[RMDB]
RNA sequence: GGGAACGACUCGAGUAGAGUCGAAAAGAUAUGGAGAGAUGGGAGCGAAGAACGUGAAGUAUUCGGAAACGAAUAUGGAGGCGGGAGCUUAGUCUCUCCUAAGUCAAAAGUAUGGUUCGCCAUACAAUCGUCUAUAAUCCUUCGGGAUUAUAGACGAAAAAGAAACAACAACAACAAC
Reactivity to DMS in 0.01 (KOAc 150mM, MgCl2 10mM, bicine 150mM(pH8.5), 24C), signal-to-noise 2, nucleotides 027 to 126: g010a050u000a300u010g000g010a030g010a020g020a040u000g010g000g000a020g000c010g000a120a140g000a090a140c050g000u000g000a240a180g000u010a010u000u000c000g000g030a090a060a110c000g000a020a040u000a020u010g020g020a270g030g000c020g020g000g010a070g020c000u000u000a300g000u000c000u000c020u000c020c000u000a010a050g000u020c040a060a060a150a080g000u010a010u020g000g010u000u040c270g030c020c010a000u000a010c020a110a140
Reactivity to 2A3 in 0.01 (KOAc 150mM, MgCl2 10mM, bicine 150mM(pH8.5), 24C), signal-to-noise 1, nucleotides 027 to 126: g040a020u040a000u120g000g010a010g040a020g020a020u110g090g300g050a020g010c030g080a300a090g060a160a090c010g080u120g030a140a050g000u000a000u000u040c000g040g010a010a080a010c010g000a000a000u030a020u020g000g070a060g300g230c060g060g050g030a010g010c000u000u040a030g000u000c000u040c000u000c000c000u010a000a010g020u000c020a000a060a000a060g000u000a000u010g100g000u020u040c300g000c120c010a000u000a000c020a010a110